[RMDB]
RNA sequence: GGGAACGACUCGAGUAGAGUCGAAAAAGCCGGUCUACGGACCGGCAAAACGUUCAUCUCGUUUUACGGGCCGCAUUAAGAUUGAAACCAAGGAACGGGGACUUCAGACUACGACUACGGUCGUAGAUUACGCCUCCGAGUUUCGACUCGGAGGCAACAUUAUCUCACGUUUCGACGUGAGAUAAUGAAAAGAAACAACAACAACAAC
Reactivity to DMS in 0.01 (KOAc 150mM, MgCl2 10mM, bicine 150mM(pH8.5), 24C), signal-to-noise 1, nucleotides 027 to 156: a210g030c030c010g060g000u000c010u000a090c230g050g000a020c000c000g030g010c040a000a020a020a040c090g010u000u010c110a160u010c040u010c000g010u010u010u010u000a080c000g020g040g000c040c020g040c020a080u010u010a090a090g000a200u000u020g000a130a160a070c000c030a040a130g000g020a040a060c040g010g000g180g020a140c060u010u020c060a120g020a160c000u000a000c010g000a010c000u000a070c300g100g000u000c010g010u000a000g000a130u010u000a080c100g020c000c010u000c000c000g020a060g000u010u000u000c260g010a080c040u000c000g010g040a020g010g010c000a000a000
Reactivity to 2A3 in 0.01 (KOAc 150mM, MgCl2 10mM, bicine 150mM(pH8.5), 24C), signal-to-noise 2, nucleotides 027 to 156: a010g060c010c020g020g010u030c020u020a110c230g080g000a000c000c000g000g040c000a010a000a010a010c030g030u020u030c010a180u040c090u020c020g010u020u000u010u100a050c060g020g010g020c100c030g070c040a070u130u140a060a100g070a180u070u150g080a190a030a000c000c040a040a100g020g010a010a020c010g000g010g000g020a030c010u170u120c180a100g010a130c000u000a000c010g010a020c000u060a020c150g070g000u010c000g000u000a000g000a000u110u110a040c060g000c000c000u010c000c030g000a000g010u020u090u070c140g110a030c000u000c000g010g000a000g000g000c000a000a000